[RMDB]
RNA sequence: GGGAACGACUCGAGUAGAGUCGAAAAAGUCAUGGUUUGAGCUUGAUCGCGGCCUUAAAUUGAAGUUGCAAAAUUUUGGCAGCCGUUCAUGCGAUCAGUUUUCUAGAGGAAGAGCACAAGUUGAGUGGAGUUCUAAUCUGUUCGCAGAUUAGAACUCAAAAGAAACAACAACAACAAC
Reactivity to DMS in 0.01 (KOAc 150mM, MgCl2 10mM, bicine 150mM(pH8.5), 24C), signal-to-noise 3, nucleotides 027 to 126: a070g010u010c070a060u000g010g000u000u000u000g010a090g000c020u000u000g020a010u000c070g020c010g000g040c060c050u000u010a030a030a100u010u010g010a120a090g000u000u010g010c090a040a110a070a120u000u000u010u010g010g010c060a080g010c060c040g030u010u000c110a100u000g020c010g010a030u000c020a030g000u000u000u000u010c040u000a090g010a080g010g010a050a050g010a060g030c030a060c100a060a080g000u000u010g000a130g020u010g020
Reactivity to 2A3 in 0.01 (KOAc 150mM, MgCl2 10mM, bicine 150mM(pH8.5), 24C), signal-to-noise 2, nucleotides 027 to 126: a000g100u100c040a040u110g070g170u110u090u190g020a030g000c000u080u140g030a000u010c020g000c000g000g050c010c000u120u130a040a050a040u130u140g040a090a040g060u070u070g040c030a080a160a260a300u170u260u140u080g080g000c000a010g010c020c030g030u100u140c060a060u100g000c010g000a000u000c000a000g000u000u070u040u090c010u060a020g040a020g080g040a080a000g000a030g000c000a020c010a030a050g040u070u090g030a050g030u130g100

The record gives the reactivity of an RNA of 177 nucleotides to DMS and 2A3. 2A3 adducts were read by reverse transcription with SuperScript II with manganese. The RNA was probed in 150 mM KOAc, 10 mM MgCl2 and 150 mM bicine (pH 8.5) at 24 C. The data come from the RNA Mapping Database (RMDB), library OK2TST. As a SHAPE reagent, 2A3 marks flexible, mostly unpaired nucleotides at the ribose 2'-OH.